[RMDB]
RNA sequence: GGGAACGACUCGAGUAGAGUCGAAAACAUGUGUACUUCGGUACACAUGAAAUGACCGCCAUUAUUGGCUAAGGCUACACGGACGGCCGGGUCUAAUGCCGAAAAUCGUUGCGUUCGCGCAACGAAACAUGUACAACACCUUCGGGUGUUGUACAUGAAAAGAAACAACAACAACAAC
Reactivity to 2A3 in 0.01 (KOAc 150mM, MgCl2 10mM, bicine 150mM(pH8.5), 24C), signal-to-noise 4, nucleotides 027 to 126: c010a000u000g000u000g010u000a000c010u020u060c200g070g000u010a000c000a010c000a000u000g000a020a000a000u110g000a010c000c000g140c020c010a090u190u200a160u300u300g010g000c060u090a190a090g030g000c000u020a030c110a020c080g020g040a010c020g020g000c010c000g000g000g000u000c020u020a050a030u090g010c010c010g000a100a010a000a050u020c010g010u000u000g000c000g010u030u060c220g000c000g000c060a000a000c000g020a000a000a000
Reactivity to DMS in 0.01 (KOAc 150mM, MgCl2 10mM, bicine 150mM(pH8.5), 24C), signal-to-noise 3, nucleotides 027 to 126: c000a000u000g000u000g000u000a010c000u000u000c220g020g000u000a000c000a010c000a000u000g000a030a100a080u010g000a030c010c000g010c010c000a050u000u010a180u010u010g010g010c020u000a080a040g040g020c000u000a040c190a130c040g000g000a040c050g000g000c010c000g010g000g000u000c010u000a060a050u010g030c010c020g010a190a050a080a080u010c000g010u000u000g010c000g020u000u010c230g010c000g000c010a000a000c000g000a010a050a120